[RMDB]
RNA sequence: GGGAACGACUCGAGUAGAGUCGAAAAACGUAGACCAGGUACGGCGGGACCAGCAACAUCGCUGUUCGCUCCGGACCAGCCAAAGCGAUGUUCUUCGGCACCAUCUCACCGAGCAGGACAUGCAGCGUACAAUCUGGCCAUUCGUGGCCAGAUUGUAAAAAGAAACAACAACAACAAC
Reactivity to DMS in 0.01 (KOAc 150mM, MgCl2 10mM, bicine 150mM(pH8.5), 24C), signal-to-noise 1, nucleotides 027 to 126: a070c120g000u020a150g000a130c060c080a220g010g000u000a010c080g020g030c080g000g040g020a020c030c030a040g010c060a170a130c150a100u000c130g040c010u000g000u010u000c180g000c010u000c030c010g000g000a160c060c110a190g020c040c050a040a040a110g030c000g000a000u000g010u010u000c020u000u000c060g000g020c100a070c090c110a020u010c060u000c080a100c020c030g000a040g000c090a030g000g010a050c060a040u010g000c020a070g030c060g000